[RMDB]
RNA sequence: GGGAACGACUCGAGUAGAGUCGAAAAAGCGGGUUCACGCAUUAUAGCGGUGUUCAAUGCAAGCCGGCACCUGGGGAUCAGGCGAGGCCAGGAUAAUACACCCUCAUACCCACGGCUACAUGAAUGAAUAUGCCAUACGUUUCGACGUAUGGCAUAUAAAAGAAACAACAACAACAAC
Reactivity to 2A3 in 0.01 (KOAc 150mM, MgCl2 10mM, bicine 150mM(pH8.5), 24C), signal-to-noise 1, nucleotides 027 to 126: a000g000c070g000g000g060u080u090c040a010c100g000c040a030u130u190a090u170a050g040c040g000g050u060g030u090u050c080a110a060u090g000c030a030a020g020c000c050g050g000c020a060c010c040u020g020g000g020g010a060u200c010a030g030g030c030g120a080g000g060c010c020a000g090g000a050u060a100a010u050a090c060a000c000c000c000u020c010a050u150a080c030c000c020a010c010g010g040c020u050a040c050a100u140g060a030a030u150g000a080
Reactivity to DMS in 0.01 (KOAc 150mM, MgCl2 10mM, bicine 150mM(pH8.5), 24C), signal-to-noise 2, nucleotides 027 to 126: a120g040c110g030g010g010u000u000c080a050c060g010c030a060u000u010a110u010a120g000c050g000g020u000g000u010u000c110a120a030u010g000c030a100a120g010c010c010g010g010c140a040c030c030u000g000g020g010g000a070u000c040a040g030g020c050g000a170g000g000c020c040a090g000g000a040u000a070a060u000a050c090a080c070c000c010u000c080a080u000a130c050c010c020a090c130g000g000c020u020a070c060a080u000g010a040a060u000g000a150